[RMDB]
RNA sequence: GGGAACGACUCGAGUAGAGUCGAAAAUCUCUCAGAAUCCAGCGAGAGGCGUAGGAGAGAGGGCCGCGGUGCUCUGGAGUAGAGGCUUCUUGCUUCGAAACACCAUCGAUCGUCCCUUCUUCUUUUAUCUUGAUCCAUAGUUCGCUAUGGAUCAAGAAAAAGAAACAACAACAACAAC
Reactivity to DMS in 0.01 (KOAc 150mM, MgCl2 10mM, bicine 150mM(pH8.5), 24C), signal-to-noise 2, nucleotides 027 to 126: u000c020u000c000u000c010a170g000a190a170u000c030c110a160g010c150g010a040g000a070g020g020c290g010u010a050g000g000a010g000a100g010a030g000g000g020c100c030g030c020g000g010u000g000c010u000c040u000g000g000a080g020u000a090g000a010g000g000c010u000u000c200u010u020g020c000u000u000c000g000a230a170a110c010a000c210c000a020u000c010g010a120u010c000g030u000c000c000c010u000u010c020u000u000c000u000u000u010u000a090
Conditions: 150 mM KOAc, 10 mM MgCl2 and 150 mM bicine (pH 8.5), 24 C. Chemical mapping of a 177-nucleotide RNA with DMS.